[RMDB]
RNA sequence: GGGAACGACUCGAGUAGAGUCGAAAAAUCCGCCGACAGUGGUGCCAGCCGGAAUCGUGAUCGGCGGAACCGUCACCGACGGAAUACUCAGCGUCGGCAGAUUGAACGCACCUAGCGCUGUGCCAGCGUACCCUAAGUCUUUCGAGACUUAGGGUACAAAAGAAACAACAACAACAAC
Reactivity to DMS in 0.01 (KOAc 150mM, MgCl2 10mM, bicine 150mM(pH8.5), 24C), signal-to-noise 5, nucleotides 027 to 126: a110u000c000c020g010c020c000g000a010c030a100g010u020g030g020u000g010c030c040a170g030c120c120g010g000a100a060u000c080g020u000g000a210u000c010g010g010c000g010g000a010a040c010c010g000u000c020a160c110c110g000a050c010g010g010a100a080u010a190c080u000c040a100g010c030g010u000c060g000g010c050a060g010a060u000u000g010a080a110c090g000c050a070c050c040u000a130g000c030g010c040u000g010u000g010c060c040a090g010c180
Reactivity to 2A3 in 0.01 (KOAc 150mM, MgCl2 10mM, bicine 150mM(pH8.5), 24C), signal-to-noise 5, nucleotides 027 to 126: a000u000c000c000g000c010c010g000a020c020a060g080u050g160g000u020g000c020c030a090g110c040c120g050g050a040a070u080c050g050u060g080a180u020c010g000g000c000g000g000a000a010c020c000g000u020c020a140c260c120g020a010c000g010g050a070a070u140a160c040u040c040a020g030c020g020u040c000g030g000c010a030g020a050u100u120g090a100a010c040g000c030a030c000c020u030a040g000c000g000c060u030g020u060g110c020c030a050g030c070

An RNA of 177 nucleotides, treated with DMS and 2A3 and read out base by base. The DMS profile rests on 5,160 reads. Source: RMDB library OK2TST, as collected in RNAgym. The RNA was probed in 150 mM KOAc, 10 mM MgCl2 and 150 mM bicine (pH 8.5) at 24 C. Reactivities are given for positions 27 through 126. For 2A3, 8,422 sequencing reads were counted.